[RMDB]
RNA sequence: GGGAACGACUCGAGUAGAGUCGAAAAGUUUCACCAUGUUGACCAGGAUGGUUUCAAUCUCCUGACCUCGUGAUCCACCUGCCUCGGCCUCCCGAAUUAUAGGCGUACAGGGAUUAUAGGGAUUACAGGUGUGAGCCACCAUGCCCGGCCGGGAGCCUAUAGCACUAGGAUUCGUCCUAGUGCUAUAAAAAGAAACAACAACAACAAC
Reactivity to DMS in 0.01 (KOAc 150mM, MgCl2 10mM, bicine 150mM(pH8.5), 24C), signal-to-noise 1, nucleotides 027 to 156: g010u020u000u000c020a180c050c000a120u000g000u000u000g010a080c020c000a070g000g000a100u010g030g000u000u000u000c090a070a090u000c020u010c020c000u000g000a050c010c000u000c040g070u000g010a060u000c020c060a150c030c000u000g000c050c030u000c040g040g000c010c020u000c020c020c020g020a090a140u010u010a120u000a080g000g010c070g010u000a060c090a130g020g000g030a120u000u000a140u000a130g000g010g020a100u010u000a060c030a060g020g010u000g020u010g020a150g000c070c000a070c040c030a060u000g010c000c010c020g010g020c000c020g000g000g000a090g020c070c060
Reactivity to 2A3 in 0.01 (KOAc 150mM, MgCl2 10mM, bicine 150mM(pH8.5), 24C), signal-to-noise 2, nucleotides 027 to 156: g010u020u020u060c040a030c020c020a040u080g030u060u040g120a100c040c000a020g000g090a090u060g030g160u090u150u200c060a040a130u030c000u000c000c000u010g050a070c000c000u060c110g020u000g010a020u030c010c000a010c020c040u010g010c010c000u040c020g100g000c000c000u020c000c010c030g020a040a020u180u100a080u100a120g110g000c050g030u040a040c120a090g050g000g010a030u080u100a090u100a130g070g010g040a040u090u140a060c050a100g000g000u000g040u080g020a050g090c070c000a000c010c020a020u140g020c000c000c000g000g040c010c030g030g040g000a120g000c000c000